[RMDB]
RNA sequence: GGGAACGACUCGAGUAGAGUCGAAAAGAUAUGGACACGUCCCGAUUGCCGAUGGGACAUGAAAGAAGUAUCGGAAACGAUACGGAUUUCAACAGCCCAUCGGCAAUCGGGAGCGUGUCCUAAGUCACACUAACUGUGUCUUCGGACACAGUUAGUGAAAAGAAACAACAACAACAAC
Reactivity to DMS in 0.01 (KOAc 150mM, MgCl2 10mM, bicine 150mM(pH8.5), 24C), signal-to-noise 1, nucleotides 027 to 126: g040a020u000a300u000g000g020a000c030a010c020g000u020c000c000c000g010a010u000u020g000c000c030g000a000u000g000g030g030a060c080a190u030g070a020a000a010g000a300a250g020u010a010u000c000g000g000a110a080a270c000g000a020u000a030c000g000g000a300u000u000u000c000a020a070c300a110g030c000c000c000a000u000c030g000g000c000a030a000u000c000g010g050g000a000g000c010g020u000g010u010c000c010u000a000a090g000u000c020a300